[RMDB]
RNA sequence: GGGAACGACUCGAGUAGAGUCGAAAAAACACCGGGUAUUGAUAAUGAAACCAUCGAUGGGAUUAAUCUAGAAAGACUAGAAAGAUACCAUCAGGAAUAUGUCAAUAAUGGUUAUAACCCCAAACCACUCCAUAACGUUUUUCGAAACGUUAUGGAGAAAAGAAACAACAACAACAAC
Reactivity to DMS in 0.01 (KOAc 150mM, MgCl2 10mM, bicine 150mM(pH8.5), 24C), signal-to-noise 2, nucleotides 027 to 126: a100a050c120a050c090c010g010g000g000u030a020u000u020g000a000u000a080a070u010g010a090a090a060c000c010a070u010c140g010a000u000g000g000g000a020u000u000a010a300u020c010u000a000g010a250a180a090g000a070c020u000a020g000a000a050a300g010a000u000a040c000c010a010u000c010a110g000g000a050a050u010a010u000g000u000c000a000a000u000a060a160u000g000g010u000u000a120u000a080a080c120c000c010c100a040a090a100c170c120a190
Reactivity to 2A3 in 0.01 (KOAc 150mM, MgCl2 10mM, bicine 150mM(pH8.5), 24C), signal-to-noise 2, nucleotides 027 to 126: a020a000c070a020c030c010g090g050g020u090a020u050u010g030a010u010a290a110u080g100a170a100a050c020c020a060u100c220g010a000u030g000g020g000a000u020u010a030a100u000c000u010a010g040a120a260a060g160a250c010u000a000g010a010a030a030g020a000u030a030c000c000a000u000c020a010g020g000a030a080u120a040u100g000u000c000a010a000u020a060a020u040g020g000u020u010a050u110a140a090c020c020c050c010a000a060a070c030c040a070